[RMDB]
RNA sequence: GGGAACGACUCGAGUAGAGUCGAAAACGCAUUAUUACCGGCUGUCGUCUCGCCGACGGCUGCGCCUGUACCACUUGAGCCGAGACCAGAGGUUGAAGUAGUGUUACCGCCAGAACCAAGGGUGGACACUUGGUUAGCGAGAGAUGAAGCGCCGUCGGACGGCUUUAACGUUCGCGUUAAAGCCGUCAAAAGAAACAACAACAACAAC
Reactivity to 2A3 in 0.01 (KOAc 150mM, MgCl2 10mM, bicine 150mM(pH8.5), 24C), signal-to-noise 1, nucleotides 027 to 156: c030g040c050a100u020u180a050u130u190a280c000c070g020g010c040u010g020u040c000g000u010c030u000c030g090c100c030g020a030c000g010g000c010u070g020c000g100c000c040u020g040u030a020c000c020a030c040u020u030g060a000g040c000c040g090a070g060a120c040c040a000g090a070g240g000u010u010g060a080a000g020u120a000g010u030g060u210u010a030c040c050g040c000c020a030g030a020a010c000c000a060a010g000g010g100u120g010g230a010c060a000c060u000u010g000g000u060u000a040g020c000g000a020g000a000g000a130u110g040a080a000g030c030g010c130c010g040u000c030g020

This 207-nucleotide RNA was probed chemically with 2A3. It was measured as part of the RMDB library OK3TST. 2A3 is a SHAPE reagent: it acylates the 2'-hydroxyl of flexible nucleotides of all four kinds.